The record gives the reactivity of an RNA of 207 nucleotides to DMS and 2A3. Conditions: 150 mM KOAc, 10 mM MgCl2 and 150 mM bicine (pH 8.5), 24 C. For DMS the reverse transcriptase was MarathonRT. The DMS profile rests on 6,532 reads. Values cover nucleotides 27 to 156.

RNA sequence: GGGAACGACUCGAGUAGAGUCGAAAAGUUGUGGAAAUACUUCCAUCAACAUUGUUUCAAACUUGAUAAUAUUAUUAUCUACAUCUUCGUACGAUCCAAAUUCCGGAAUAGAUGUAUCGCACGCUCUGGCCACCCAGAUAACCAAAAAGUCACACGCAUACAUCAAUUUAUUCGUAAAUUGAUGUAUAAAAGAAACAACAACAACAAC
Reactivity to DMS in 0.01 (KOAc 150mM, MgCl2 10mM, bicine 150mM(pH8.5), 24C), signal-to-noise 4, nucleotides 027 to 156: g020u000u010g030u000g010g000a070a090a210u010a170c140u010u010c010c010a070u000c030a060a050c050a120u000u000g020u010u000u010c030a100a090a170c070u000u000g010a090u000a050a120u000a170u000u010a100u000u000a080u010c010u010a080c010a040u000c020u000u000c040g030u000a120c050g000a050u000c110c090a050a080a230u000u000c060c010g020g010a100a090u000a050g010a050u000g010u000a040u000c020g020c010a060c010g010c050u000c040u000g010g000c010c030a070c050c020c030a110g010a100u000a070a120c040c080a010a080a070a080a140g010u000c040a060c090a030c070g020c120
Reactivity to 2A3 in 0.01 (KOAc 150mM, MgCl2 10mM, bicine 150mM(pH8.5), 24C), signal-to-noise 7, nucleotides 027 to 156: g010u010u000g000u010g020g070a030a070a090u250a230c110u020u000c010c010a050u160c010a010a010c020a040u020u100g010u050u050u050c100a120a130a070c060u060u060g020a010u030a100a050u110a130u300u180a080u070u020a020u140c010u030a020c010a030u010c020u060u050c040g090u080a060c060g050a080u020c040c020a040a140a300u160u030c060c020g060g020a050a040u060a080g030a020u020g010u020a030u070c040g000c020a030c050g010c010u020c030u030g030g000c050c010a030c030c020c010a020g040a050u070a040a050c050c010a060a050a040a030a030g040u090c020a020c000a010c120g050c030